[RMDB]
RNA sequence: GGGAACGACUCGAGUAGAGUCGAAAAGAAAGUUUGAUUUGCAAGCCAACCUAAAUAUAUGGGCUAACCAAUCUCUGACAGAAUAUCCUUACUCUUUUGUGAAUUGUAAGGCCAGUUAAUAGGAGUAGUUAUGCUCAUACUUCGGUAUGAGCAUAACAAAAGAAACAACAACAACAAC
Reactivity to DMS in 0.01 (KOAc 150mM, MgCl2 10mM, bicine 150mM(pH8.5), 24C), signal-to-noise 2, nucleotides 027 to 126: g020a070a130a070g010u010u000u010g000a140u000u000u000g040c080a090a100g000c010c020a060a110c080c040u010a050a070a080u010a080u000a080u020g000g000g000c020u000a090a110c110c050a040a060u030c010u000c020u000g000a180c260a090g000a030a040u000a090u010c000c020u010u000a050c030u000c030u000u000u000u010g010u050g010a000a030u000u000g000u000a030a000g010g000c150c070a080g010u000u000a040a060u000a120g040g000a040g000u000a100
Reactivity to 2A3 in 0.01 (KOAc 150mM, MgCl2 10mM, bicine 150mM(pH8.5), 24C), signal-to-noise 2, nucleotides 027 to 126: g010a010a150a010g000u030u040u110g080a100u100u100u210g090c060a100a050g000c010c010a000a060c050c010u090a160a080a020u210a040u060a050u270g000g000g000c040u070a010a030c060c000a020a080u080c020u030c010u020g060a060c000a080g190a050a010u040a010u090c000c000u000u000a020c020u070c020u120u080u070u200g120u040g120a110a100u050u020g020u050a010a010g070g010c020c000a060g010u030u060a090a000u050a130g000g050a010g020u070a020
This 177-nucleotide RNA was probed chemically with DMS and 2A3. For DMS the reverse transcriptase was MarathonRT. The reactions ran in a buffer of 150 mM KOAc, 10 mM MgCl2 and 150 mM bicine (pH 8.5), at 24 C. For 2A3 the reverse transcriptase was SuperScript II with manganese. Source: RMDB library OK2TRN, as collected in RNAgym.